Record summary: This 207-nucleotide RNA was probed chemically with DMS and 2A3. The DMS profile rests on 1,560 reads. The 2A3 profile rests on 807 reads. For DMS the reverse transcriptase was MarathonRT. It was measured as part of the RMDB library RSTRND.
RNA sequence: GGGAACGACUCGAGUAGAGUCGAAAAGAAAAGUUUUCAAGAUUAAAUGAAGCAAACUAACUUCGAUUGUUGCGUUCUGCAUAGGAGUUAGGGAUUUUACAGAACGAUAAGCAUGUAGUGGUCAAUUCGUAAUUUGCCAAGGACGAGAGUUCAAUUCACACAAUCCUAACUUCGGUUAGGAUUGUGUAAAAGAAACAACAACAACAAC
Reactivity to DMS in 0.01 (KOAc 150mM, MgCl2 10mM, bicine 150mM(pH8.5), 24C), signal-to-noise 1, nucleotides 027 to 156: g020a100a040a100a200g020u010u000u020u010c040a090a150g000a300u000u000a080a140a210u020g000a030a030g060c050a080a110a080c070u000a050a010c000u000u000c010g010a260u000u000g030u020u010g020c000g000u000u000c080u040g000c110a040u010a130g010g000a060g040u000u000a040g000g040g020a120u010u000u000u010a130c010a080g070a000a050c000g020a130u010a070a100g000c040a050u010g000u000a080g030u010g000g000u000c050a010a170u010u030c070g000u000a110a090u000u000u000g060c000c000a020a140g020g030a030c020g020a070g000a120g050u000u000c030a000a190u000u010c050
Reactivity to 2A3 in 0.01 (KOAc 150mM, MgCl2 10mM, bicine 150mM(pH8.5), 24C), signal-to-noise 2, nucleotides 027 to 156: g040a040a040a010a000g030u110u040u060u160c090a060a010g030a140u070u150a070a070a150u170g060a030a000g000c020a040a020a050c020u000a000a000c010u040u020c030g080a130u300u080g080u050u070g090c030g010u060u000c020u060g030c030a030u100a140g000g020a010g010u000u010a030g010g010g030a000u030u080u030u240a050c040a010g020a050a000c020g000a010u020a130a010g010c020a020u100g040u080a020g030u000g020g080u060c020a040a050u000u090c020g070u140a110a070u040u050u120g010c040c060a010a030g040g000a000c030g040a020g010a000g020u010u050c060a060a120u230u080c040